[RMDB]
RNA sequence: GGGAACGACUCGAGUAGAGUCGAAAAGGUGGUAUGCCACAUUGUUCAUCGUAGUCUUUGGCUUAACCAUUUUCACAGUUCGUUACUAUGAUACGCAAUGUCCUGUGUGGGCUCUCAUUGUUGCCUAGUAGGGACUACGGUUCGCCGUAGUCCCUACAAAAGAAACAACAACAACAAC
Reactivity to 2A3 in 0.01 (KOAc 150mM, MgCl2 10mM, bicine 150mM(pH8.5), 24C), signal-to-noise 2, nucleotides 027 to 126: g000g000u050g040g120u100a040u200g060c010c000a010c000a020u060u090g050u050u020c030a060u050c090g030u060a030g050u000c030u000u060u070g010g000c010u050u080a080a070c030c000a130u070u010u020u060c090a080c010a090g040u140u090c020g000u040u030a000c000u010a000u050g060a050u010a040c040g030c030a040a040u030g010u060c000c020u090g010u020g010u100g010g020g050c010u000c010u010c040a080u060u150g050u160u040g020c000c000u020a040
Reactivity to DMS in 0.01 (KOAc 150mM, MgCl2 10mM, bicine 150mM(pH8.5), 24C), signal-to-noise 2, nucleotides 027 to 126: g020g020u000g010g010u000a050u000g050c020c040a110c100a080u000u000g010u010u000c090a070u000c060g040u000a030g020u000c060u000u020u020g000g000c040u000u000a130a130c090c060a090u000u000u000u000c140a100c100a080g030u000u000c090g020u000u000a030c020u000a060u000g010a060u000a080c120g010c010a020a010u000g010u010c030c020u010g010u000g010u010g010g000g010c040u000c060u000c120a090u000u000g000u020u010g010c030c000u010a080